[RMDB]
The data come from the RNA Mapping Database (RMDB), library OK1LIB. Structure probing data (DMS and 2A3) for a 177-nucleotide construct. The reactions ran in a buffer of 150 mM KOAc, 10 mM MgCl2 and 150 mM bicine (pH 8.5), at 24 C. For 2A3, 34,141 sequencing reads were counted.

RNA sequence: GGGAACGACUCGAGUAGAGUCGAAAAGCUGGUCCGGAUUGGCCCCAGCGAACACUUGACGAACGGUUAGUCCCGUCUUGUGGAUUAGGACGUUCUAGGUCCGGUCUGGCCCCUAGUUCGUCCGAAACAUAAUCCAUUAUUUCGAUAAUGGAUUAUGAAAAGAAACAACAACAACAAC
Reactivity to DMS in 0.01 (KOAc 150mM, MgCl2 10mM, bicine 150mM(pH8.5), 24C), signal-to-noise 9, nucleotides 027 to 126: g010c000u000g000g000u030c030c020g000g010a200u050u040g010g020c120c140c000c010a030g010c030g010a120a130c050a020c010u000u000g000a020c020g000a130a100c200g000g010u030u030a110g000u010c090c030c010g010u010c060u010u000g010u000g000g000a140u030u020a100g000g010a010c000g010u000u000c000u000a010g010g000u040c030c020g010g000u050c150u050g000g000c160c150c010c010u000a010g010u000u000c000g010u000c000c000g000a050a070a160
Reactivity to 2A3 in 0.01 (KOAc 150mM, MgCl2 10mM, bicine 150mM(pH8.5), 24C), signal-to-noise 9, nucleotides 027 to 126: g000c000u010g010g030u120c020c020g120g160a300u140u300g100g010c070c040c000c000a010g000c000g010a050a010c020a000c010u010u020g020a010c010g030a190a040c050g060g090u150u170a070g130u290c010c050c000g000u010c010u020u020g010u020g030g040a070u040u140a060g000g000a000c000g000u010u000c000u000a000g000g010u040c030c020g040g130u130c160u180g080g000c070c040c000c000u000a000g000u000u000c000g000u000c000c000g000a000a000a000